[RMDB]
RNA sequence: GGGAACGACUCGAGUAGAGUCGAAAAAUGAUGCUGUGAUGAAUCCUUAUAUCGCAGAGAUGCGCGCCGUAGCUUUGCGUUCAUACUUUGAAGAUAUCGUCUCUUUCAAAGUAGAAAAUGAUUUAAACAUGUUUCCCUUUUUCGAAAGGGAAACAUGAAAAGAAACAACAACAACAAC
Reactivity to DMS in 0.01 (KOAc 150mM, MgCl2 10mM, bicine 150mM(pH8.5), 24C), signal-to-noise 3, nucleotides 027 to 126: a070u010g010a060u010g020c020u010g010u000g010a070u020g000a110a100u000c020c040u000u010a100u010a050u000c020g010c030a030g000a170g000a070u010g010c060g020c130g030c080c060g010u000a060g020c060u000u000u000g010c050g010u000u000c100a190u000a010c000u000u000u000g010a010a010g020a040u000a120u010c200g000u010c200u000c010u010u010u000c000a000a020a000g000u000a020g000a050a050a080a090u000g000a060u010u000u010a060a080a230
Reactivity to 2A3 in 0.01 (KOAc 150mM, MgCl2 10mM, bicine 150mM(pH8.5), 24C), signal-to-noise 2, nucleotides 027 to 126: a000u140g060a050u100g030c020u010g030u020g060a070u050g010a030a050u020c000c000u070u060a110u030a000u190c080g000c020a020g010a010g030a060u110g050c030g000c020g000c010c070g130u010a000g010c000u060u070u020g020c010g040u030u070c040a060u020a050c010u020u000u010g000a000a020g000a010u080a110u190c150g120u040c010u000c020u020u160u060c020a010a010a000g000u030a020g040a010a080a000a010u140g070a050u070u150u300a060a130a000